[RMDB]
RNA sequence: GGGAACGACUCGAGUAGAGUCGAAAAGACCUGCAUGGAGACAACAGUUCAAGCAUCUGACUGAUGUUUUUUUGCACAAUGGUUCAAGAAAAUAGCAUGCAGUGCUCUAUGAGUAGUUAGCAGGCAACUACUACGGCAAUUUCGAUUGCCGUAGUAGAAAAGAAACAACAACAACAAC
Reactivity to DMS in 0.01 (KOAc 150mM, MgCl2 10mM, bicine 150mM(pH8.5), 24C), signal-to-noise 3, nucleotides 027 to 126: g010a110c010c010u000g020c010a130u000g020g000a140g000a040c040a070a080c040a150g000u010u000c090a150a110g000c090a050u010c060u000g000a080c020u000g010a030u000g000u050u000u000u000u020u000u000g010c090a060c150a170a090u020g030g010u000u010c040a040a050g000a030a010a030a030u000a030g000c030a020u000g000c010a010g010u000g010c010u000c080u000a050u010g000a070g010u010a070g000u000u010a120g020c030a020g000g000c010a110a210
Reactivity to 2A3 in 0.01 (KOAc 150mM, MgCl2 10mM, bicine 150mM(pH8.5), 24C), signal-to-noise 2, nucleotides 027 to 126: g040a030c000c000u000g000c000a030u140g080g060a060g030a080c000a070a020c020a070g050u100u080c030a070a030g020c030a120u190c070u080g050a090c010u010g000a040u020g000u000u000u000u000u000u000u000g040c030a030c050a100a300u220g160g000u020u050c020a030a020g000a060a060a000a010u080a030g000c010a010u040g000c010a000g010u000g020c010u000c050u070a140u200g020a020g070u100a020g050u060u130a000g000c030a010g000g000c010a010a040

Chemical mapping of a 177-nucleotide RNA with DMS and 2A3.
2A3 adducts were read by reverse transcription with SuperScript II with manganese.
For DMS the reverse transcriptase was MarathonRT.
Values cover nucleotides 27 to 126.
The DMS profile rests on 2,370 reads.